[RMDB]
RNA sequence: GGGAACGACUCGAGUAGAGUCGAAAACUCGUCGUUUCGACGACGAGAAAAAGAUAUGGAUAUUUCUGGGAGGGAGCUUGGUCAUCGGAAACGAUGACUGAGCUUUGAUCUCCCAGAGAAUAUCCUAAGUCAAAAAACUUCGAGUUCGCUCGAAGAAGGUAUGAACGUUGUUCGCAACGUUCAUACCAAAAGAAACAACAACAACAAC
Reactivity to 2A3 in 0.01 (KOAc 150mM, MgCl2 10mM, bicine 150mM(pH8.5), 24C), signal-to-noise 1, nucleotides 027 to 156: c000u000c000g000u010c010g000u020u070u190c290g070a010c020g000a000c000g000a000g120a120a070a000a000a000g030a020u120a060u100g010g000a010u000a000u010u040u000c010u000g010g000g000a010g010g030g000a010g000c000u040u020g000g010u020c000a000u010c020g040g000a080a050a050c020g000a000u000g000a000c010u000g000a000g010c000u050u010u000g000a010u010c000u000c010c000c000a000g000a000g000a000a000u000a000u000c000c000u010a060a030g020u030c050a000a000a000a060a130a150c010u120u130c000g000a010g040u060u150c160g100c110u000c000g060a050a000g050a010a000